[RMDB]
This 177-nucleotide RNA was probed chemically with 2A3 and DMS.
RNA sequence: GGGAACGACUCGAGUAGAGUCGAAAACGUGGUCGACAUAGGUGUUCAUAGGUCCAGAGUCUAUAUUGGGGACAAAUGAGUCGAAUCUAUGGGAGAACGGGAAACGACGCUGGCUGCCUAGACAAAAUCAUCGUUGUAUCUUCGGGUGCAGUGAUGAAAAAGAAACAACAACAACAAC
Reactivity to 2A3 in 0.01 (KOAc 150mM, MgCl2 10mM, bicine 150mM(pH8.5), 24C), signal-to-noise 5, nucleotides 027 to 126: c040g050u070g040g040u040c020g030a060c020a060u110a050g110g030u050g030u060u070c030a050u040a030g010g020u000c000c010a030g010a020g080u000c060u030a180u030a100u200u200g060g020g020g010a010c020a010a110a010u090g010a010g010u020c010g010a000a010u000c000u010a020u020g000g010g000a060g000a080a020c000g000g000g000a030a130a010c110g050a000c000g000c050u010g000g000c040u100g020c000c000u020a020g020a060c030a030a120a000a060
Reactivity to DMS in 0.01 (KOAc 150mM, MgCl2 10mM, bicine 150mM(pH8.5), 24C), signal-to-noise 3, nucleotides 027 to 126: c090g020u030g020g010u000c020g010a090c030a060u020a060g000g020u000g010u020u010c040a060u010a050g000g010u000c000c010a090g000a070g000u010c100u000a090u020a120u020u020g000g000g000g020a080c090a030a080a060u020g010a040g000u010c040g010a070a050u010c080u010a060u010g000g000g000a300g000a200a210c170g000g000g000a120a200a240c230g000a150c040g000c000u000g000g000c300u010g000c000c000u010a000g000a040c140a050a050a050a060

Notes: For 2A3 the reverse transcriptase was SuperScript II with manganese. As a SHAPE reagent, 2A3 marks flexible, mostly unpaired nucleotides at the ribose 2'-OH.